[RMDB]
RNA sequence: GGGAACGACUCGAGUAGAGUCGAAAAGGACUUAAUGCGGUUAUGAUAGCGUCGGACAAGGUCUAAAGUGUCGCCUUCCAUUGUUUCACGAGUCAAAGGAGAGUGAAUGUCUUGCCAAACGUCAAGAUAAGGUUCAAAUUUUCGAAUUUGAACCUUAAAAAGAAACAACAACAACAAC
Reactivity to DMS in 0.01 (KOAc 150mM, MgCl2 10mM, bicine 150mM(pH8.5), 24C), signal-to-noise 6, nucleotides 027 to 126: g010g000a070c040u000u000a080a110u010g010c070g000g010u000u010a060u010g020a120u010a090g010c060g010u010c120g010g000a070c060a070a070g010g000u000c060u010a080a090a100g010u000g010u000c040g010c030c030u000u000c030c030a090u000u000g010u000u010u000c060a090c070g000a090g000u000c050a030a060a110g010g010a060g010a080g010u000g000a060a050u000g010u000c010u000u010g020c030c040a060a080a110c160g000u000c040a030a060g000a140
Reactivity to 2A3 in 0.01 (KOAc 150mM, MgCl2 10mM, bicine 150mM(pH8.5), 24C), signal-to-noise 3, nucleotides 027 to 126: g020g010a040c020u060u080a080a030u140g030c040g020g010u050u090a050u140g080a050u070a040g050c030g030u050c040g050g020a030c030a110a010g020g000u000c010u120a110a060a030g070u050g030u060c010g010c010c000u030u030c020c010a060u020u060g040u030u060u020c070a020c080g040a070g060u010c040a110a020a000g080g000a050g000a000g020u030g020a050a060u090g020u000c000u000u020g020c010c000a110a140a030c070g080u060c040a010a010g010a070